[RMDB]
About this RNA: Structure probing data (DMS and 2A3) for a 177-nucleotide construct. High 2A3 reactivity points to a flexible backbone, as in loops and unpaired stretches. Source: RMDB library TTRDES, as collected in RNAgym.
RNA sequence: GGGAACGACUCGAGUAGAGUCGAAAAGAUAUGGAUGUAUAUAGCGAGGAUCUGUAAAGAGUGGUUCGGAAACGAACCACAGGGAGCUAUGUACAUCCUAAGUCGCAAAGGGUUGUUCGCAACCCAACACAUCCAAUACGUUCGCGUAUUGGAUGUGAAAAGAAACAACAACAACAAC
Reactivity to DMS in 0.01 (KOAc 150mM, MgCl2 10mM, bicine 150mM(pH8.5), 24C), signal-to-noise 3, nucleotides 027 to 126: g020a030u000a030u010g000g000a020u000g010u000a000u000a000u000a010g000c010g020a170g020g020a080u000c080u020g000u010a130a110a250g010a110g020u000g000g000u000u000c000g020g000a000a010a030c000g010a010a020c000c000a010c010a000g000g010g010a030g010c000u000a000u000g000u000a010c000a020u000c000c000u000a000a080g000u000c000g010c300a110a160a150g010g000g010u000u000g010u000u010c230g010c050a020a010c000c010c000a080a140
Reactivity to 2A3 in 0.01 (KOAc 150mM, MgCl2 10mM, bicine 150mM(pH8.5), 24C), signal-to-noise 2, nucleotides 027 to 126: g000a000u000a000u060g010g000a000u010g010u020a020u000a000u010a070g000c020g040a300g150g090a240u130c040u180g160u250a180a200a060g190a080g050u010g000g000u000u020c010g000g000a030a030a010c010g000a010a000c010c000a000c000a000g010g010g010a200g000c000u000a010u010g000u000a010c000a000u010c000c000u000a010a000g000u000c000g000c100a120a150a040g050g010g000u020u020g030u060u070c240g000c160a000a000c000c000c030a000a000